[RMDB]
The record gives the reactivity of an RNA of 177 nucleotides to 2A3 and DMS. For DMS the reverse transcriptase was MarathonRT. The reactions ran in a buffer of 150 mM KOAc, 10 mM MgCl2 and 150 mM bicine (pH 8.5), at 24 C. 2A3 adducts were read by reverse transcription with SuperScript II with manganese. Reactivities are given for positions 27 through 126. For DMS, 5,717 sequencing reads were counted.
RNA sequence: GGGAACGACUCGAGUAGAGUCGAAAAGGUUUUCGGCAGGUUGUCGCCAACUACCAUCGGCGCGAUGGCGGUGUUUACCCAGCGAGCGAAGCUGAUGCUGGACGGGGAAUUGACGCUCUUGCUGAUGAUUAACUAAUGCCUUCGGGCAUUAGUUAAUAAAAGAAACAACAACAACAAC
Reactivity to 2A3 in 0.01 (KOAc 150mM, MgCl2 10mM, bicine 150mM(pH8.5), 24C), signal-to-noise 1, nucleotides 027 to 126: g060g000u090u060u040u070c020g000g010c030a040g000g030u160u040g070u170c030g000c010c010a000a010c000u080a050c010c000a000u040c030g090g020c090g030c080g130a080u080g060g000c000g000g040u030g030u060u080u120a170c040c000c000a000g030c010g030a010g020c000g080a110a030g050c030u070g020a130u120g050c000u010g010g100a080c070g020g000g000g030a030a060u060u090g030a030c010g000c010u000c000u020u030g000c010u000g000a050u040g010
Reactivity to DMS in 0.01 (KOAc 150mM, MgCl2 10mM, bicine 150mM(pH8.5), 24C), signal-to-noise 4, nucleotides 027 to 126: g020g000u000u010u010u010c020g010g010c020a040g010g010u000u010g020u000c020g020c020c030a090a040c030u000a110c040c010a040u000c030g010g000c120g020c060g010a040u010g000g030c030g000g020u010g010u010u000u010a100c060c020c010a090g020c050g000a070g020c030g000a110a130g010c060u010g010a100u010g020c030u000g010g010a100c100g010g000g010g010a090a130u010u010g000a080c060g020c010u000c030u000u000g000c010u000g000a090u010g000
The data come from the RNA Mapping Database (RMDB), library OK2TRN.